[RMDB]
RNA sequence: GGGAACGACUCGAGUAGAGUCGAAAACGGAAUUGACCUAUCCUUAAUUGGCGAUUUAACCGCUGUGUCGUUCGUUUGUGAGUUAGAGGGUAAAACUUACAGUCAUACACUUACUUUCUCUGUACGGUCGCAAUAUGAGCAACUAGAUACAGAACAGAGGAUAACGUCGAUUCGUCGACGUUAUCCUAAAAGAAACAACAACAACAAC
Reactivity to 2A3 in 0.01 (KOAc 150mM, MgCl2 10mM, bicine 150mM(pH8.5), 24C), signal-to-noise 1, nucleotides 027 to 156: c040g000g030a020a070u000u150g130a120c000c050u070a140u110c050c030u080u170a070a070u180u010g030g010c000g040a000u070u090u300a060a020c040c010g080c100u090g030u000g000u060c030g000u000u080c010g050u040u000u010g000u010g000a000g000u040u000a070g020a180g280g090g020u130a080a130a000a000c000u040u000a000c000a020g000u010c070a050u120a040c020a000c000u300u300a070c000u000u190u160c110u050c000u000g020u020a000c010g050g000u010c030g000c010a030a010u260a070u300g080a120g000c000a000a000c000u010a040g020a110u000a040c000a000g090a110a000c000a100g260
Record summary:
The record gives the reactivity of an RNA of 207 nucleotides to 2A3. The data come from the RNA Mapping Database (RMDB), library OK3TST. Conditions: 150 mM KOAc, 10 mM MgCl2 and 150 mM bicine (pH 8.5), 24 C.